Annotation
Chemical mapping of a 177-nucleotide RNA with 2A3 and DMS. The data come from the RNA Mapping Database (RMDB), library OK2TST. The RNA was probed in 150 mM KOAc, 10 mM MgCl2 and 150 mM bicine (pH 8.5) at 24 C. For 2A3 the reverse transcriptase was SuperScript II with manganese.
RNA sequence: GGGAACGACUCGAGUAGAGUCGAAAACAAGUCAAGUUCUACGAAAGCUACUUGAAACUAAUCACUGACUUGUUGGAAGCGAUAAACGCAUCCAACUCAUCUAACGAAAAACUAGUAGAGUGGGUGAUGUCGAAAAGUGUUUCGACACUUUUCGACAAAAAGAAACAACAACAACAAC
Reactivity to 2A3 in 0.01 (KOAc 150mM, MgCl2 10mM, bicine 150mM(pH8.5), 24C), signal-to-noise 1, nucleotides 027 to 126: c020a000a020g000u030c030a000a040g010u100u000c070u120a110c040g160a300a000a010g090c030u050a020c030u040u070g040a140a090a000c050u050a120a000u050c020a050c010u020g120a010c000u010u120g000u010u010g000g030a070a000g010c000g040a030u200a070a150a040c000g000c000a000u000c010c000a010a050c010u000c020a080u030c010u010a030a040c050g130a280a000a060a050a030c050u020a010g040u000a010g020a030g050u040g040g000g000u010g020a070
Reactivity to DMS in 0.01 (KOAc 150mM, MgCl2 10mM, bicine 150mM(pH8.5), 24C), signal-to-noise 1, nucleotides 027 to 126: c050a030a040g040u000c050a040a020g000u000u020c030u000a110c140g000a140a040a060g000c170u000a050c080u000u000g020a030a100a110c210u000a130a050u000c050a080c070u000g000a050c020u000u000g000u020u000g010g000a020a020g040c020g000a190u020a010a020a160c020g020c000a020u000c000c000a000a020c030u010c120a080u000c070u000a080a010c010g010a000a080a020a030a180c210u020a030g000u000a090g000a030g020u000g020g010g010u000g000a090

Values cover nucleotides 27 to 126.